[RMDB]
RNA sequence: GGGAACGACUCGAGUAGAGUCGAAAAGUGCCUCGUCGGCCCGGCAUGCCAACCUGAUCCGAAGUUCAAGGUGGUUUCUCUGGCCUUCCAGAGAGAUGCGCGUCGGAAGAACCGACGAACAAAACUUAAAACAAAACGACGUUCGCGUCGUUUUGAACUAAACCUACCAGUUCGCUGGUAGGUUUAGAAAAGAAACAACAACAACAAC
Reactivity to DMS in 0.01 (KOAc 150mM, MgCl2 10mM, bicine 150mM(pH8.5), 24C), signal-to-noise 2, nucleotides 027 to 156: g010u000g000c000c020u000c020g020u010c010g030g000c060c010c010g010g000c010a110u000g040c040c090a080a040c000c020u010g010a040u000c070c090g000a200a100g010u010u010c000a060a040g020g010u000g010g020u000u010u010c020u000c010u000g010g000c240c120u000u000c010c000a070g000a050g000a030g020a070u000g000c030g060c020g020u000c000g000g000a150a080g020a130a110c000c010g000a050c010g000a020a210c050a040a060a070a110c030u000u000a080a100a150a260c010a010a000a010a010c010g000a020c000g010u010u010c300g030c040g000u010c010g010u010u010u000u000g000a060a150
Reactivity to 2A3 in 0.01 (KOAc 150mM, MgCl2 10mM, bicine 150mM(pH8.5), 24C), signal-to-noise 3, nucleotides 027 to 156: g040u030g110c010c010u020c010g000u000c000g000g030c000c000c030g010g010c020a030u090g020c010c020a070a090c020c010u020g010a040u090c080c130g280a170a070g030u060u050c050a100a020g030g000u000g030g000u020u080u010c000u000c010u000g020g020c030c050u300u160c040c000a010g000a010g000a010g020a080u170g020c070g000c020g050u010c000g000g030a150a050g020a090a060c000c010g000a000c000g030a050a000c030a000a050a010a010c030u170u260a070a070a030a060c000a000a020a000a000c000g000a000c010g020u060u080c240g010c010g050u010c000g000u000u010u010u000g000a000a000